[RMDB]
RNA sequence: GGGAACGACUCGAGUAGAGUCGAAAAGAAUCCUCGUCCUUACGGCUUUUGUUUUCCAGCUGGAGCCGUCUCCUAUUUUAUACAUAUUUCGAUAUGUAUGCUGGACGACAACGAGGAUACAAUUAGAGGGUACCGUUUAGUUCGCUGAACGGUACCCAAAAGAAACAACAACAACAAC
Reactivity to DMS in 0.01 (KOAc 150mM, MgCl2 10mM, bicine 150mM(pH8.5), 24C), signal-to-noise 4, nucleotides 027 to 126: g010a080a020u000c000c010u000c010g010u000c070c070u020u010a030c040g000g000c090u020u000u000u000g010u000u010u000u030c010c030a150g020c010u010g000g000a010g010c030c030g010u010c130u000c010c020u000a080u030u030u020u030a020u000a000c000a010u000a000u000u010u040c180g010a010u000a000u010g000u000a000u000g000c150u010g000g010a020c140g020a050c070a040a020c000g020a010g000g010a010u010a040c150a130a110u050u010a070g010a300
Reactivity to 2A3 in 0.01 (KOAc 150mM, MgCl2 10mM, bicine 150mM(pH8.5), 24C), signal-to-noise 5, nucleotides 027 to 126: g050a030a030u000c010c000u000c010g020u030c020c070u090u160a030c030g050g000c050u010u080u040u080g050u000u030u030u020c010c010a030g030c020u050g010g010a010g010c060c010g080u030c010u000c010c010u060a190u160u160u030u080a020u010a010c000a000u010a030u010u090u050c110g140a000u020a000u000g010u000a000u020g040c030u010g010g020a020c060g000a010c000a010a000c000g000a000g000g020a010u030a080c030a010a120u160u150a070g050a080
An RNA of 177 nucleotides, treated with DMS and 2A3 and read out base by base. In probing experiments dimethyl sulfate is read out at A N1 and C N3, which are open when not base-paired. Values cover nucleotides 27 to 126. The RNA was probed in 150 mM KOAc, 10 mM MgCl2 and 150 mM bicine (pH 8.5) at 24 C. The data come from the RNA Mapping Database (RMDB), library OK1LIB.